[RMDB]
RNA sequence: GGGAACGACUCGAGUAGAGUCGAAAACGAAAGCCAAGGCCUGUCGGGAAUAACCGACGUUAGGGAAUUCGGCAAGUUAGUCCCGUACGUUCGCAAUAAGGGAUGCCUGCCUCGGAAAGAGGCAGGUUUCCAAGAUAUCAUUCGUGAUAUCUUGGAAAAAAGAAACAACAACAACAAC
Reactivity to DMS in 0.01 (KOAc 150mM, MgCl2 10mM, bicine 150mM(pH8.5), 24C), signal-to-noise 9, nucleotides 027 to 126: c030g010a110a140a150g010c000c010a050a110g010g010c000c000u000g000u010c000g000g000g010a210a120u030a140a170c010c000g000a010c010g010u020u040a100g010g000g010a040a040u010u000c140g020g020c020a080a300g010u010u010a090g000u000c010c000c000g020u010a090c120g000u010u010c070g010c050a080a070u030a090a110g000g000g000a060u010g000c000c000u000g000c000c000u000c000g000g020a090a100a120g000a010g000g000c000a000g000g010u000
Reactivity to 2A3 in 0.01 (KOAc 150mM, MgCl2 10mM, bicine 150mM(pH8.5), 24C), signal-to-noise 7, nucleotides 027 to 126: c010g050a070a000a000g010c000c010a040a030g060g030c010c080u140g020u010c010g010g010g060a170a300u180a260a090c000c010g000a010c010g010u040u100a040g000g020g000a010a030u040u050c060g000g000c010a030a000g020u050u080a020g030u000c010c010c000g020u040a040c050g020u030u090c090g000c120a050a090u100a150a070g040g000g010a020u090g010c000c000u000g000c000c010u000c010g020g150a290a100a070g000a040g000g000c000a000g000g000u000